[RMDB]
RNA sequence: GGGAACGACUCGAGUAGAGUCGAAAAGGCUACGUGACGAUCGACGGCCUCGGCGCGCGCGUCGCGGGCCACCCGCUCGCGUACGCGGCGUGGAUCUUCAUCGUCUACGGCGCCGCGAUGCCGGCCAUCGGACUAAAUCAUUCGUGAUUUAGUCCGAAAAAGAAACAACAACAACAAC
Reactivity to 2A3 in 0.01 (KOAc 150mM, MgCl2 10mM, bicine 150mM(pH8.5), 24C), signal-to-noise 2, nucleotides 027 to 126: g030g000c010u030a020c040g010u010g010a010c000g010a020u070c170g030a040c030g050g010c000c010u020c030g110g040c010g000c030g000c000g000c010g050u010c020g000c000g000g000g010c020c000a060c010c000c000g000c010u020c000g030c020g010u140a040c010g010c010g030g030c000g020u040g080g010a080u020c000u050u040c030a050u040c010g010u000c040u030a010c020g030g000c020g000c010c020g000c050g040a080u150g050c020c040g030g050c080c000a070
Reactivity to DMS in 0.01 (KOAc 150mM, MgCl2 10mM, bicine 150mM(pH8.5), 24C), signal-to-noise 4, nucleotides 027 to 126: g020g000c010u000a060c010g020u000g000a010c020g010a010u000c140g020a040c080g010g010c080c070u000c090g040g020c010g020c010g020c050g000c010g010u000c070g000c010g010g000g010c050c120a040c240c140c100g000c020u000c010g000c000g010u010a030c050g020c000g000g000c000g020u000g000g010a030u010c030u000u000c040a040u000c040g000u000c000u010a030c020g000g000c090g000c010c000g010c100g000a080u000g010c030c020g010g000c050c080a140